Annotation:
Structure probing data (2A3 and DMS) for a 177-nucleotide construct.

[RMDB]
RNA sequence: GGGAACGACUCGAGUAGAGUCGAAAAGAACGGGACUCGUAAGACCUGGAUUGGGCUGCUCCGAUGUAAGUCGGUGAUACUCCGGUAGCCAAGGAUCUUCCUUGGCGAGCACGGUGAGAAUCGGCCCCUUCACUUUAGACUUCGGUCUAAAGUGAAGAAAAGAAACAACAACAACAAC
Reactivity to 2A3 in 0.01 (KOAc 150mM, MgCl2 10mM, bicine 150mM(pH8.5), 24C), signal-to-noise 3, nucleotides 027 to 126: g040a080a010c020g000g010g080a050c050u040c140g040u120a080a090g040a070c010c000u030g100g040a140u090u100g000g020g010c020u030g010c000u000c000c020g000a010u020g080u250a090a150g010u000c000g050g000u010g020a040u080a110c010u010c010c000g010g010u030a010g000c010c000a000a000g040g010a070u100c070u100u070c140c000u000u000g040g020c020g000a000g010c100a100c030g000g000u050g030a060g080a010a060u040c030g010g000c010c010c010
Reactivity to DMS in 0.01 (KOAc 150mM, MgCl2 10mM, bicine 150mM(pH8.5), 24C), signal-to-noise 3, nucleotides 027 to 126: g000a110a070c030g000g000g020a140c100u000c180g040u000a110a100g010a090c010c000u000g020g020a140u010u000g010g010g000c020u000g010c040u000c000c000g010a010u000g010u010a090a130g010u000c010g010g000u000g000a120u000a220c120u000c000c000g000g000u000a260g010c000c000a010a000g000g000a120u000c250u000u010c000c000u000u000g010g000c000g020a030g020c060a070c010g000g010u020g000a080g000a090a080u000c030g000g020c010c010c020